[RMDB]
RNA sequence: GGGAACGACUCGAGUAGAGUCGAAAAUUGACUGCGUUGGAAAACGUGGCAUUUGGCCCCAUCCGUGUGCGUGGAGCUUCUAAGGAAGCGGCCAACAAACUCGCUAUGGAGCUAUUGACCAAGGUGGCGACGCCUACCUCUUCGGAGGUAGGCGUCGAAAAGAAACAACAACAACAAC
Reactivity to DMS in 0.01 (KOAc 150mM, MgCl2 10mM, bicine 150mM(pH8.5), 24C), signal-to-noise 1, nucleotides 027 to 126: u000u000g030a180c010u000g010c000g040u000u000g010g010a190a130a020a010c010g010u000g000g010c010a050u010u000u000g000g010c000c000c010c040a070u000c300c060g010u000g050u000g010c290g000u010g010g030a300g000c020u010u010c010u000a180a210g010g000a010a000g000c020g010g050c000c000a070a040c040a130a180a070c120u000c030g010c080u000a080u020g000g000a020g010c040u000a100u000u000g020a130c000c010a050a010g010g000u000g000g000